[RMDB]
RNA sequence: GGGAACGACUCGAGUAGAGUCGAAAAGAGACCAGGGAUCCUGGCACCAGCAGGAGGAAAGUCAGGCAAAAUCAUCAGGAACUGAGGCUACUGCUUGGAGUUGUAAAACUAGACCUUCCCAGUGCCAACGAAAAGGACCAGAGCACAACUGAAAUGGCGUAUUAAUAAGAUUCGUCUUAUUAAUACGAAAAGAAACAACAACAACAAC
Reactivity to 2A3 in 0.01 (KOAc 150mM, MgCl2 10mM, bicine 150mM(pH8.5), 24C), signal-to-noise 6, nucleotides 027 to 156: g070a000g020a030c020c020a020g020g030g020a070u070c020c010u020g010g020c010a060c020c020a030g070c040a030g000g060a020g030g040a120a060a020g060u040c030a020g000g080c030a050a070a040a060u090c050a030u020c030a040g050g050a040a050c030u030g020a030g050g020c020u060a020c030u080g050c020u050u070g050g010a050g020u040u040g050u100a060a080a050a010c030u040a040g060a080c000c000u030u030c000c010c020a010g000u020g020c000c010a040a040c070g040a030a050a060a070g060g010a020c010c020a010g010a020g040c020a020c020a110a090c050u110g050a050a070a110u100g100g000
Reactivity to DMS in 0.01 (KOAc 150mM, MgCl2 10mM, bicine 150mM(pH8.5), 24C), signal-to-noise 3, nucleotides 027 to 156: g010a140g000a140c020c030a060g020g020g010a080u000c020c000u000g000g030c000a080c040c030a120g000c040a060g020g010a090g030g000a150a080a090g010u000c030a120g000g020c090a060a060a090a080u000c030a080u000c050a090g020g000a090a090c050u000g000a150g010g020c020u000a070c050u000g020c060u000u000g020g020a110g020u020u000g010u000a030a070a070a090c050u000a090g000a090c000c020u000u000c010c010c020a110g030u000g000c020c030a060a170c110g000a050a030a040a090g000g010a040c020c040a090g010a090g000c020a030c020a040a100c060u010g020a040a070a120u000g020g020

The data come from the RNA Mapping Database (RMDB), library OK3TST. An RNA of 207 nucleotides, treated with 2A3 and DMS and read out base by base. The DMS profile rests on 6,652 reads. 2A3 adducts were read by reverse transcription with SuperScript II with manganese. Reactivities are rounded to 0.1 and cut off at 0 and 3.